Chemical mapping of a 177-nucleotide RNA with 2A3 and DMS. For DMS, 1,632 sequencing reads were counted.
RNA sequence: GGGAACGACUCGAGUAGAGUCGAAAACGUCAGACGACGAAGUCGGUCCAUCUGCGGUAAAAGACCGACAUAGAGUUCGAAGCAGAACGCACAACCGCAGAAACACGAUUGGAGUGUGAAUGAGAGAAGCUGGCAUAGGAUUCGUCCUAUGCCAGCUAAAAGAAACAACAACAACAAC
Reactivity to 2A3 in 0.01 (KOAc 150mM, MgCl2 10mM, bicine 150mM(pH8.5), 24C), signal-to-noise 2, nucleotides 027 to 126: c010g000u030c050a030g030a260c100g000a010c000g030a160a000g030u000c000g020g000u000c030c000a130u030c000u020g000c000g000g000u000a040a090a000a000g000a010c000c040g000a000c020a000u110a090g170a000g000u090u000c000g090a070a050g100c030a080g070a070a020c040g050c010a050c140a040a110c000c000g000c000a000g090a050a020a000c030a000c050g220a120u140u300g170g000a180g060u050g000u030g010a100a040u280g000a070g000a010g010a130
Reactivity to DMS in 0.01 (KOAc 150mM, MgCl2 10mM, bicine 150mM(pH8.5), 24C), signal-to-noise 2, nucleotides 027 to 126: c000g020u030c020a270g050a110c160g000a100c030g000a080a050g000u000c000g000g000u030c000c160a300u000c020u000g000c000g000g020u000a020a080a050a100g000a030c030c020g000a000c000a020u050a050g020a110g050u000u000c030g020a240a150g000c230a170g030a010a020c020g020c150a110c180a030a140c000c010g010c000a010g000a180a090a160c110a100c010g040a190u000u020g000g050a140g030u000g020u030g000a040a090u050g000a090g050a180g030a030

It was measured as part of the RMDB library OK1LIB. The RNA was probed in 150 mM KOAc, 10 mM MgCl2 and 150 mM bicine (pH 8.5) at 24 C. For 2A3 the reverse transcriptase was SuperScript II with manganese.